Source information: This 207-nucleotide RNA was probed chemically with 2A3 and DMS. For 2A3, 2,443 sequencing reads were counted. It was measured as part of the RMDB library OK3TST. For 2A3 the reverse transcriptase was SuperScript II with manganese. The RNA was probed in 150 mM KOAc, 10 mM MgCl2 and 150 mM bicine (pH 8.5) at 24 C. Reactivities are rounded to 0.1 and cut off at 0 and 3.
RNA sequence: GGGAACGACUCGAGUAGAGUCGAAAAGCCAGCUCGGUGCAGGCUAUAGCUGCCAUCGGCUGACCUAGAGAAGACACAUCAGCUGAUCCUUUGGACCCGGGGACUUGAGACAGAAGUUCUGGGCUUCUCCUCCUGCGGCCUAGCUCUGAGACAAUGAUAAAUUAGUAGUGUUCGCACUACUAAUUUAAAAAGAAACAACAACAACAAC
Reactivity to 2A3 in 0.01 (KOAc 150mM, MgCl2 10mM, bicine 150mM(pH8.5), 24C), signal-to-noise 3, nucleotides 027 to 156: g090c030c000a010g010c020u030c030g010g030u030g010c000a010g050g000c040u120a090u190a260g040c050u050g060c060c050a040u010c030g000g000c000u000g010a020c010c030u060a050g030a010g050a250a020g090a080c070a010c010a160u080c010a010g000c010u020g010a090u190c010c010u090u130u160g070g010a100c020c040c000g000g010g010g000a020c010u070u070g030a030g030a120c040a060g120a090a000g010u060u010c000u050g000g020g000c000u070u010c010u000c000c020u030c010c010u030g020c030g050g000c000c010u020a040g000c000u000c010u040g030a030g010a040c070a040a080u130g040a060
Reactivity to DMS in 0.01 (KOAc 150mM, MgCl2 10mM, bicine 150mM(pH8.5), 24C), signal-to-noise 3, nucleotides 027 to 156: g010c020c020a080g010c010u000c050g090g020u000g020c040a070g010g020c060u000a090u000a080g020c030u000g010c050c050a090u000c020g050g000c000u000g010a020c010c030u010a150g000a210g000a110a110g010a150c050a100c080a140u000c030a080g020c040u010g010a040u000c040c030u000u000u010g020g010a090c030c030c040g000g010g010g020a110c030u000u010g000a200g010a220c110a130g020a070a040g010u000u010c060u000g000g030g020c030u010u010c010u000c050c010u000c030c020u010g030c080g000g000c000c000u000a090g060c040u000c040u010g010a140g020a070c060a070a090u000g000a300